[RMDB]
RNA sequence: GGGAACGACUCGAGUAGAGUCGAAAACUAACAAACAAAAAGUUAUACCAAAAGAGCACACUCUAACACCUCACGAAGAACGCAUUUUAAGGUUUGUACAACAAGCUGUAAGCAUGCAUGUUAUGGCUGGAACUAGUCCAUCUAAUGCGUUAGAUGACAUAGUCAUCGCCUUCGGGCGAUGACUAUGAAAAGAAACAACAACAACAAC
Reactivity to DMS in 0.01 (KOAc 150mM, MgCl2 10mM, bicine 150mM(pH8.5), 24C), signal-to-noise 2, nucleotides 027 to 156: c090u030a090a120c050a150a070a200c130a090a120a100a110a140g010u000u000a070u000a300c040c040a050a120a070a190g020a090g020c080a110c070a070c050u000c020u020a070a080c070a040c020c030u010c060a050c100g030a050a080g030a050a010c040g000c050a020u000u000u020u000a080a000g010g000u000u000u000g010u020a110c090a080a100c050a040a080g000c000u010g000u010a010a070g050c040a100u000g000c140a140u000g000u010u000a040u000g000g020c000u000g000g010a020a100c050u010a120g000u000c050c000a030u010c010u000a040a020u000g010c110g030u000u000a020g030a060u020g020a200
Reactivity to 2A3 in 0.01 (KOAc 150mM, MgCl2 10mM, bicine 150mM(pH8.5), 24C), signal-to-noise 4, nucleotides 027 to 156: c030u090a040a000c010a120a090a010c070a110a080a040a040a010g050u120u060a150u100a200c050c070a110a080a040a010g060a010g050c100a030c040a040c070u060c030u080a100a050c040a080c040c030u060c040a060c070g080a070a060g020a130a000c010g000c010a020u040u020u060u090a070a030g060g000u020u070u070g060u050a080c050a140a030c010a130a000g010c010u010g020u070a040a030g040c020a050u150g000c070a080u100g040u050u040a050u040g010g020c010u030g010g060a050a030c040u070a050g070u050c050c020a020u050c030u010a020a000u030g010c030g030u010u010a050g010a130u070g010a020